[RMDB]
The record gives the reactivity of an RNA of 207 nucleotides to 2A3. The reactions ran in a buffer of 150 mM KOAc, 10 mM MgCl2 and 150 mM bicine (pH 8.5), at 24 C. The data come from the RNA Mapping Database (RMDB), library M2RFPK. 2A3 adducts were read by reverse transcription with SuperScript II with manganese.
RNA sequence: GGGAACGACUCGAGUAGAGUCGAAAAGCCACAUAUCCCGUGACAUUGCGAAAGCAAGGCUGGCGGUAGGUAGUCCUGGGCGGCGACAGCCUUGGACUGCGGCGUAAAGGUGUACCUGGCGCCGUUAUAACGCGGUAACAGUUCGCUGUUACCGCAAGCUCAGCAAUUACUUCGGUAAUUGCUGAGCAAAAGAAACAACAACAACAAC
Reactivity to 2A3 in 0.01 (KOAc 150mM, MgCl2 10mM, bicine 150mM(pH8.5), 24C), signal-to-noise 1, nucleotides 027 to 156: g030c010c000a180c000a030u160a030u100c000c000c000g020u060g070a010c100a180u030u030g020c000g000a060a000a020g000c010a000a020g000g060c070u080g040g020c020g010g010u080a060g010g090u040a010g050u000c000c010u100g000g010g000c000g000g060c070g040a040c100a000g000c000c000u000u010g020g000a000c010u000g000c000g000g000c000g000u090a210a240a070g040g000u140g030u180a180c000c000u000g040g000c010g000c000c000g010u030u030a080u050a160a030c120g020c000g000g000u000a000a000c000a000g010u060u050c200g040c060u020g000u000u000a010c010c000g000c000a000a000